[RMDB]
RNA sequence: GGGAACGACUCGAGUAGAGUCGAAAAGUCUGUUCGCAGACACCAAUGGGGUCGCAGGGAGAUCCUAAGCUUUGAUCUUACUGAAGCCUCCACGGUAAGGGAGCGAUGGGAUCAUCGAUCUGCGACGGAGGCACCCUGAAAUGACAUUCGUGUCAAAGUGAGCAAUAGGGUUCGCCCUAUUGCUCACAAAAGAAACAACAACAACAAC
Reactivity to 2A3 in 0.01 (KOAc 150mM, MgCl2 10mM, bicine 150mM(pH8.5), 24C), signal-to-noise 3, nucleotides 027 to 156: g020u030c050u020g040u030u090c300g040c110a000g000a010c000a030c050c040a020a090u150g000g000g000g030u030c040g240c000a010g080g100g030a050g000a010u030c010c000u020a180a040g000c020u300u140u050g020a030u040c000u010u020a010c020u010g070a150a060g020c000c000u000c010c000a020c010g000g010u000a000a000g000g010g010a010g000c030g140a170u300g000g040g010a000u030c000a080u040c050g160a060u050c030u150g040c010g010a020c030g010g000a000g000g010c000a030c000c010c000u000g060a120a100a070u050g000a010c010a030u060u120c220g110u080g000u060c000a070a010a100
Chemical mapping of a 207-nucleotide RNA with 2A3. The data come from the RNA Mapping Database (RMDB), library RNAMAK. The 2A3 profile rests on 2,132 reads.